[RMDB]
RNA sequence: GGGAACGACUCGAGUAGAGUCGAAAAGACGGCCGCGAACCCGCGAGGGUAAGCUAAUCCGAAAAAGUGUUCCUUAGUUCGGAUUGCAGGCUGCAACUCGCCUGCAUGAAGCCGGAAUCGCUAGUAAUAGUUCUCUUGAGUUCGCUCAAGAGAACUAAAAAGAAACAACAACAACAAC
Reactivity to DMS in 0.01 (KOAc 150mM, MgCl2 10mM, bicine 150mM(pH8.5), 24C), signal-to-noise 4, nucleotides 027 to 126: g010a110c030g010g010c020c110g000c000g020a300a090c010c010c000g020c300g000a210g000g010g030u000a020a300g030c000u020a070a030u000c000c000g020a020a010a060a050a070g020u030g010u020u010c020c000u010u000a100g010u010u000c000g010g000a020u000u000g010c000a010g000g000c000u020g000c200a130a120c200u010c090g000c000c020u000g010c010a060u050g020a080a090g000c010c020g000g000a120a060u010c050g020c040u010a100g020u020a150a140
Reactivity to 2A3 in 0.01 (KOAc 150mM, MgCl2 10mM, bicine 150mM(pH8.5), 24C), signal-to-noise 3, nucleotides 027 to 126: g100a000c000g010g000c010c050g010c010g020a090a130c000c000c000g050c020g010a120g000g000g010u020a010a000g000c010u020a010a020u010c000c000g030a010a000a000a030a000g120u110g070u100u130c010c000u030u040a040g040u050u010c010g000g000a010u000u010g020c000a010g010g000c020u050g020c040a040a050c030u080c140g000c000c010u020g000c000a010u070g050a010a010g000c010c010g030g010a050a030u120c050g040c150u040a040g050u090a100a110